[RMDB]
RNA sequence: GGGAACGACUCGAGUAGAGUCGAAAAGUUCGUGCUCGACGGGCUCGAUUACGAACCGGUGCGCGCGGGCUCGCGCGUGCGCGCGCCGCUUGUCGACGCGACCGAUCCGCUUGCCGGCGCGGGCGAAGUCAUGGAUUAGUUUCGACUAAUCCAUGACAAAAGAAACAACAACAACAAC
Reactivity to 2A3 in 0.01 (KOAc 150mM, MgCl2 10mM, bicine 150mM(pH8.5), 24C), signal-to-noise 5, nucleotides 027 to 126: g020u030u030c000g000u010g020c080u010c010g000a010c010g030g050g020c030u040c050g120a190u210u300a130c090g020a050a040c050c040g020g000u000g000c010g010c000g010c000g030g090g020c040u040c030g070c030g000c080g180u020g000c020g000c000g000c000g010c010c000g000c000u030u060g010u020c010g010a020c010g010c010g030a020c010c010g010a080u040c020c010g030c130u070u160g080c040c020g070g000c030g000c000g010g020g000c020g020a120a020
Reactivity to DMS in 0.01 (KOAc 150mM, MgCl2 10mM, bicine 150mM(pH8.5), 24C), signal-to-noise 6, nucleotides 027 to 126: g010u000u000c000g020u000g000c150u000c000g010a030c020g010g010g030c140u000c020g010a170u000u010a090c060g010a040a070c260c100g010g020u000g010c010g010c000g000c000g020g000g010c030u000c230g010c230g020c020g000u010g000c020g010c010g010c010g010c000c000g000c060u000u010g010u000c010g010a050c030g000c010g010a040c080c030g000a120u010c030c020g000c090u010u010g010c080c030g010g010c100g010c020g000g000g010c030g010a080a120